[RMDB]
RNA sequence: GGGAACGACUCGAGUAGAGUCGAAAAUUGGAGUUUCAGCAGUUGGAACACAUAAUUCCAUUUCUGCAACACCAGUUUUUUGGUCAACAUCAUAGUAGCAAAAGAAUGGUGCACCGUUAGACUUUCCAGGACCUCAGUGGUUCGCCACUGAGGUCCUAAAAGAAACAACAACAACAAC
Reactivity to 2A3 in 0.01 (KOAc 150mM, MgCl2 10mM, bicine 150mM(pH8.5), 24C), signal-to-noise 1, nucleotides 027 to 126: u000u000g000g030a010g030u080u000u150c080a000g030c020a030g040u030u030g030g000a030a000c140a000c060a260u180a170a070u130u000c000c010a000u060u060u020c000u000g050c000a010a010c000a030c020c000a000g000u000u000u000u000u140u090g020g010u000c010a030a030c000a000u060c030a000u060a060g300u070a020g130c040a080a140a070a030g180a100a000u020g000g000u000g040c170a050c010c040g030u110u050a030g000a060c000u020u000u000c010c010

Source: RMDB library OK1LIB, as collected in RNAgym.
An RNA of 177 nucleotides, treated with 2A3 and read out base by base.
The reactions ran in a buffer of 150 mM KOAc, 10 mM MgCl2 and 150 mM bicine (pH 8.5), at 24 C.
For 2A3, 487 sequencing reads were counted.
For 2A3 the reverse transcriptase was SuperScript II with manganese.